[RMDB]
RNA sequence: GGGAACGACUCGAGUAGAGUCGAAAAUUCUUCCAUGAUUGGGACGAAGCCGCCACCGGGCGCUCCCCUCGGAGGUCCCUCGAGGGGGUUCACAUCCCCAACCCGCGGGCCGGCUACUCUUCUUUCCGUCGAUCUCUCUUCGGAGAGAUCAAAAGAAACAACAACAACAAC
Reactivity to DMS in 0.01 (KOAc 150mM, MgCl2 10mM, bicine 150mM(pH8.5), 24C), signal-to-noise 5, nucleotides 027 to 129: u030u010c010u000u000c030c080a030u020g030a120u000u000g020g010g030a000c040g040a090a040g030c110c030g060c000c000a120c120c060g070g020g020c100g040c020u050c000c000c000c000u020c000g010g000a000g060g000u000c000c000c000u050c040g010a000g000g010g010g010g010u060u050c110a140c130a130u010c000c000c010c070a110a080c000c000c000g000c300g000g010g060c120c040g020g020c000u040a060c160u040c030u030u020c040u040u010u040c000c030g030u050c130
Reactivity to 2A3 in 0.01 (KOAc 150mM, MgCl2 10mM, bicine 150mM(pH8.5), 24C), signal-to-noise 6, nucleotides 027 to 129: u060u010c020u120u060c020c020a110u200g030a140u140u240g020g000g010a010c060g070a080a020g020c010c020g030c010c000a140c030c000g010g010g000c040g040c040u130c000c000c000c000u010c000g080g030a080g030g060u050c020c010c010u020c010g000a010g020g000g000g000g000u130u150c070a080c000a190u100c000c000c000c010a020a060c000c000c000g010c120g000g010g010c080c040g000g000c000u040a030c010u030c000u170u010c000u050u060u010c050c030g110u070c050